[RMDB]
RNA sequence: GGGAACGACUCGAGUAGAGUCGAAAAGGCCUCGUUAAAAGCCGCAAAGUUAUAGUUGCAAACGACGAUAACUACGCUCUAGCCGCUUAAUGCCGCUAGCCAUCUACCACACGUUUCGCACAUGGGCAGUGGAUUUGAUGGUCAUCUCACAUCGUGCCACUUAUCCGAGGUUCGCCUCGGAUAAGUGAAAAGAAACAACAACAACAAC
Reactivity to DMS in 0.01 (KOAc 150mM, MgCl2 10mM, bicine 150mM(pH8.5), 24C), signal-to-noise 1, nucleotides 027 to 156: g000g020c000c000u000c060g000u000u030a020a080a030a090g040c040c030g010c030a030a140a120g030u000u000a030u010a050g000u010u010g050c000a140a180a280c130g000a020c050g000a080u010a030a030c010u000a120c180g000c030u000c050u000a060g010c000c070g000c030u010u000a080a120u000g020c000c110g000c070u000a030g030c030c070a020u000c010u010a100c000c030a070c030a140c120g030u000u000u000c070g050c090a080c120a070u000g000g070g000c010a130g030u000g010g000a140u000u000u020g030a070u000g030g030u010c010a030u000c030u010c030a030c130a080u010c020g020u000g000c040
Reactivity to 2A3 in 0.01 (KOAc 150mM, MgCl2 10mM, bicine 150mM(pH8.5), 24C), signal-to-noise 3, nucleotides 027 to 156: g050g010c000c030u030c050g030u040u090a070a170a000a030g030c050c060g000c100a150a140a010g000u020u020a040u010a060g020u040u040g120c140a150a090a090c100g030a010c010g000a020u020a060a060c030u060a050c060g030c030u000c000u030a010g000c010c010g000c040u090u250a120a020u290g000c020c000g000c010u010a000g000c000c000a030u000c010u010a020c000c010a020c010a030c160g010u030u050u050c010g010c000a000c000a020u000g030g000g000c020a020g020u020g030g040a110u290u040u150g010a030u020g030g070u080c090a170u050c050u070c000a030c000a020u040c100g000u010g000c000
Record summary:
Chemical mapping of a 207-nucleotide RNA with DMS and 2A3. Reactivities are given for positions 27 through 156. The reactions ran in a buffer of 150 mM KOAc, 10 mM MgCl2 and 150 mM bicine (pH 8.5), at 24 C. High 2A3 reactivity points to a flexible backbone, as in loops and unpaired stretches.